[RMDB]
RNA sequence: GGGAACGACUCGAGUAGAGUCGAAAAUUCCAUUUGAGUAUCCUGAAAACGUGCUUUUCAGCAUGGAACGUACAUAUUAAAUAGUAGGAGUGCAUAGUGGCCCGUAUAGCAGGCAUUAACAUUCCUGAAAACGUGAAAAGGUUCGCCUUUUCACGAAGUCUGUUCUAUCCUUCGGGAUAGAACAGACAAAAGAAACAACAACAACAAC
Reactivity to 2A3 in 0.01 (KOAc 150mM, MgCl2 10mM, bicine 150mM(pH8.5), 24C), signal-to-noise 2, nucleotides 027 to 156: u040u000c000c000a000u130u090u080g070a080g100u060a180u100c030c050u040g020a070a000a010a000c100g030u020g130c040u100u090u140u240c120a010g060c020a070u050g040g000a080a000c090g040u190a010c020a070u220a070u140u230a130a070a130u120a110g100u050a000g060g000a010g030u010g010c140a090u030a070g020u050g160g100c040c000c000g160u200a110u070a210g160c130a040g020g000c000a000u000u000a000a010c000a000u000u020c000c000u000g010a010a090a090a040c000g010u000g000a000a000a000a000g000g000u030u020c080g200c010c000u000u000u010u020c000a000c000g000a010a000
Source: RMDB library M2RFPK, as collected in RNAgym. The record gives the reactivity of an RNA of 207 nucleotides to 2A3. The reactions ran in a buffer of 150 mM KOAc, 10 mM MgCl2 and 150 mM bicine (pH 8.5), at 24 C.